[RMDB]
RNA sequence: GGGAACGACUCGAGUAGAGUCGAAAAGUCGUGGUGUAUGGUAUCCGAGAUGAAAAUUUGUUGCACUGAAAUGCAGUGUGAAAUAUUCAUUCAUACCAGAACGCGUAGCAGCUCAACAGAUUUUCACCAGUCGUCAGCGUUUCGACGCUGACGACUGAAAAGAAACAACAACAACAAC
Reactivity to 2A3 in 0.01 (KOAc 150mM, MgCl2 10mM, bicine 150mM(pH8.5), 24C), signal-to-noise 1, nucleotides 027 to 126: g090u000c020g020u030g000g250u050g000u100a150u050g010g010u010a010u050c000c000g020a000g000a150u060g040a000a000a000a020u010u000u180g030u030u030g030c120a050c020u000g030a080a080a000u160g080c020a000g000u000g000u050g170a080a060a040u240a140u110u100c170a070u000u060c000a000u000a000c000c020a010g060a120a080c040g010c030g020u060a100g000c030a000g000c010u030c030a060a050c000a040g000a010u040u000u000u000c070a090c080